[RMDB]
Chemical mapping of a 207-nucleotide RNA with DMS and 2A3. For 2A3 the reverse transcriptase was SuperScript II with manganese. The RNA was probed in 150 mM KOAc, 10 mM MgCl2 and 150 mM bicine (pH 8.5) at 24 C. Values are in units of 0.01, from 0 to 300, in steps of 10.

RNA sequence: GGGAACGACUCGAGUAGAGUCGAAAACGGCAUUUAGCCAGUUUCGCUUCGGAGGAGGGCCACCUAGUUUUCCUGUGCCGAGACGCUAAACUGUCGGUUCGUGGUGUCUCACAAGCAAUCGACCGAGGAGAAUUCACCUUUCAAAUGGCGGAUAAACGACAAUUUCUAUGUUCGCAUAGAAAUUGUCAAAAGAAACAACAACAACAAC
Reactivity to DMS in 0.01 (KOAc 150mM, MgCl2 10mM, bicine 150mM(pH8.5), 24C), signal-to-noise 2, nucleotides 027 to 156: c100g010g000c010a170u020u010u000a110g030c010c030a130g020u000u010u000c020g020c050u020u000c080g020g020a120g020g010a100g000g000g030c020c020a050c070c070u000a050g010u010u000u000u010c000c020u000g030u000g010c110c030g000a050g010a040c030g030c020u000a040a020a120c060u000g040u000c090g010g010u000u000c020g000u010g030g000u000g000u000c030u000c010a090c070a100a110g010c050a050a070u000c050g000a090c040c020g000a100g000g000a100g000a060a100u000u010c030a050c000c000u010u010u010c120a040a110a110u000g020g030c020g020g010a100u000a060a080a130c080
Reactivity to 2A3 in 0.01 (KOAc 150mM, MgCl2 10mM, bicine 150mM(pH8.5), 24C), signal-to-noise 6, nucleotides 027 to 156: c010g000g030c030a040u080u120u220a060g020c010c010a020g000u000u030u030c050g010c030u060u070c060g080g040a040g010g030a020g010g030g010c010c010a080c020c050u050a080g050u040u020u030u060c040c010u080g060u080g080c030c020g010a020g000a020c020g000c020u060a090a110a060c040u060g040u080c020g050g010u060u060c040g060u060g030g030u040g020u000c010u000c020a060c020a030a050g040c020a020a090u080c040g070a050c040c020g030a040g000g030a020g040a040a010u100u070c030a090c010c000u060u180u120c090a110a110a070u080g020g000c050g020g030a060u150a130a110a030c060
The DMS profile rests on 4,793 reads.